[RMDB]
RNA sequence: GGGAACGACUCGAGUAGAGUCGAAAAAGUCAUUGGUUAGUAAAUACGAAUGAAUUAGUCUGGUAUAGAACAAUCUGUGAGCAACGAUUGCAUCCUCAUCUUUUCGAUGCAAACAGGUUGUUAACACCCUACAGCGACGAUUCGUCGUCGCUGUAGGAAAAGAAACAACAACAACAAC
Reactivity to DMS in 0.01 (KOAc 150mM, MgCl2 10mM, bicine 150mM(pH8.5), 24C), signal-to-noise 1, nucleotides 027 to 126: a000g030u000c000a080u020u000g000g020u000u000a180g000u080a190a030a020u070a010c080g000a010a000u000g000a030a050u030u000a130g020u020c030u000g000g000u050a160u010a050g050a000a000c000a000a000u000c000u000g030u000g000a300g010c020a040a140c050g000a140u000u000g010c100a050u010c000c110u030c080a070u010c120u020u000u000u030c020g010a020u000g000c000a030a050a000c000a000g000g060u010u020g020u120u000a010a110c170a080c090
Reactivity to 2A3 in 0.01 (KOAc 150mM, MgCl2 10mM, bicine 150mM(pH8.5), 24C), signal-to-noise 3, nucleotides 027 to 126: a000g060u050c030a000u000u070g160g020u030u040a120g070u280a080a140a120u130a100c020g070a030a010u070g020a000a080u060u040a060g060u090c070u030g040g050u120a170u120a160g070a070a000c020a000a000u000c000u000g000u000g020a050g000c000a060a000c020g020a020u000u060g020c050a110u100c000c060u140c070a200u050c070u000u030u030u040c000g000a000u000g000c010a000a010a010c000a000g080g000u000u000g000u000u010a010a010c030a050c020
Annotation: Structure probing data (DMS and 2A3) for a 177-nucleotide construct. For DMS the reverse transcriptase was MarathonRT. Source: RMDB library OK1LIB, as collected in RNAgym. The 2A3 profile rests on 1,320 reads. The RNA was probed in 150 mM KOAc, 10 mM MgCl2 and 150 mM bicine (pH 8.5) at 24 C.